[RMDB]
RNA sequence: GGGAACGACUCGAGUAGAGUCGAAAACUAACCAGACUCAUCAUUUUGGCCUUUCAUGUAUGCUUUUCCUAUGGCCAAAACGUCCACAAAUUACUAAUAAAUGCUGACAAGGAGAGAGGUUAAAACCAGGAAGCCAUGCCUUUUAGCUGACAAAACACAUAUAGGUCCACUUCGGUGGACCUAUAUGAAAAGAAACAACAACAACAAC
Reactivity to 2A3 in 0.01 (KOAc 150mM, MgCl2 10mM, bicine 150mM(pH8.5), 24C), signal-to-noise 2, nucleotides 027 to 156: c020u060a060a040c040c010a060g080a060c030u000c050a150u010c060a050u140u020u000u000g010g010c010c000u060u110u090c090a080u090g150u190a080u120g050c070u050u090u120u040c010c030u070a080u100g020g000c010c020a020a020a000a000c010g050u020c020c040a040c040a030a140a070u220u160a100c040u060a040a110u090a070a110a070u130g050c040u050g040a020c010a040a030g020g000a060g010a000g020a000g000g040u040u060a020a090a040a020c040c010a020g050g010a020a000g000c050c000a060u090g040c060c000u040u150u050u120a030g000c040u070g030a000c010a020a120a040a040c190a010
Reactivity to DMS in 0.01 (KOAc 150mM, MgCl2 10mM, bicine 150mM(pH8.5), 24C), signal-to-noise 2, nucleotides 027 to 156: c050u030a070a110c030c050a150g000a100c040u000c060a120u010c060a120u010u000u000u000g060g020c030c030u000u010u010c050a080u000g040u000a040u000g010c030u000u000u000u020c020c010u010a160u000g020g000c010c020a010a010a020a080c030g000u000c030c080a120c030a060a060a070u000u000a300c110u000a070a100u000a050a090a050u000g020c060u020g010a080c050a070a080g020g020a100g000a090g000a060g020g030u000u000a000a050a080a120c030c020a130g000g000a110a100g000c000c020a060u010g030c020c060u000u000u030u000a050g030c020u000g000a100c020a020a090a060a080c060a150
The data come from the RNA Mapping Database (RMDB), library OK3TST. Chemical mapping of a 207-nucleotide RNA with 2A3 and DMS.